Source: RMDB library 15KLIB, as collected in RNAgym.
Chemical mapping of a 170-nucleotide RNA with DMS and 2A3.
The RNA was probed in 150 mM KOAc, 10 mM MgCl2 and 150 mM bicine (pH 8.5) at 24 C.
For DMS, 159,667 sequencing reads were counted.
The 2A3 profile rests on 150,177 reads.

[RMDB]
RNA sequence: GGGAACGACUCGAGUAGAGUCGAAAACCCUGUCUCCUCGGUUCUUCUUCGAUCCGGACCGGCUCAUCUCGGCAAGGGGCGGCAGUCCUCAGUGCUCUUACUCUUUCCUAUAAAGAGGAGACUGCUGGCAAGACACUAUUCGUAGUGUCUAAAAGAAACAACAACAACAAC
Reactivity to DMS in 0.01 (KOAc 150mM, MgCl2 10mM, bicine 150mM(pH8.5), 24C), signal-to-noise 9, nucleotides 027 to 129: c000c000c010u020g010u000c010u000c020c020u010c000g010g010u010u000c030u040u020c050u020u020c080g000a110u020c030c040g010g020a090c120c040g000g040c000u020c060a080u000c050u000c020g020g000c080a080a080g010g010g010g010c050g010g030c130a060g010u030c020c020u010c030a040g000u030g020c130u020c030u010u030a140c020u010c020u010u010u000c120c080u050a100u070a060a040a040g000a000g020g010a040g000a020c020u020g030c000u000g020g020c160a100
Reactivity to 2A3 in 0.01 (KOAc 150mM, MgCl2 10mM, bicine 150mM(pH8.5), 24C), signal-to-noise 9, nucleotides 027 to 129: c000c000c010u010g030u000c010u000c000c000u020c010g060g000u050u030c020u110u010c010u070u080c060g080a080u020c020c020g020g030a050c010c010g020g000c000u010c020a090u030c040u020c040g040g000c040a070a090g040g000g000g000c010g000g000c020a020g040u060c000c010u040c010a040g020u040g100c020u000c000u060u120a290c000u020c000u030u040u030c030c030u110a100u190a220a080a010g020a000g000g000a000g000a000c010u020g020c020u010g030g040c050a050